[RMDB]
RNA sequence: GGGAACGACUCGAGUAGAGUCGAAAAUAACAUGAUUGAGACCUUCCUGAAAAGUACCGGUAUCCGGGCGCUGCUGGACAAGGACGGCAUUACCGAAGUGGUGAUUAACCGCCCGUAUGAAAUCGUGAUGUAUGUCACGGUUCGCCGUGACAUACAUAAAAGAAACAACAACAACAAC
Reactivity to 2A3 in 0.01 (KOAc 150mM, MgCl2 10mM, bicine 150mM(pH8.5), 24C), signal-to-noise 4, nucleotides 027 to 126: u260a060a020c060a070u130g060a090u050u100g050a060g090a070c000c000u020u060c020c000u040g040a060a010a020a060g060u050a080c020c050g000g030u060a060u060c030c000g000g030g010c000g000c020u060g030c010u020g000g050a080c030a090a070g110g020a000c000g000g010c020a020u000u050a050c020c000g060a230a030g080u130g190g020u020g010a030u060u060a020a000c030c020g000c010c010c000g000u030a060u120g150a060a070a040u090c050g040u080g090
Reactivity to DMS in 0.01 (KOAc 150mM, MgCl2 10mM, bicine 150mM(pH8.5), 24C), signal-to-noise 3, nucleotides 027 to 126: u030a090a140c150a070u000g000a100u000u000g010a110g010a130c030c020u000u020c040c000u020g000a030a080a160a030g030u020a040c060c020g010g000u010a090u010c050c040g020g010g010c070g000c080u010g000c010u010g000g000a120c140a120a120g040g000a020c040g010g000c100a050u000u000a000c050c000g020a150a150g010u020g010g040u000g000a050u010u030a110a120c120c010g000c010c010c020g020u010a050u040g010a080a040a050u000c030g010u000g000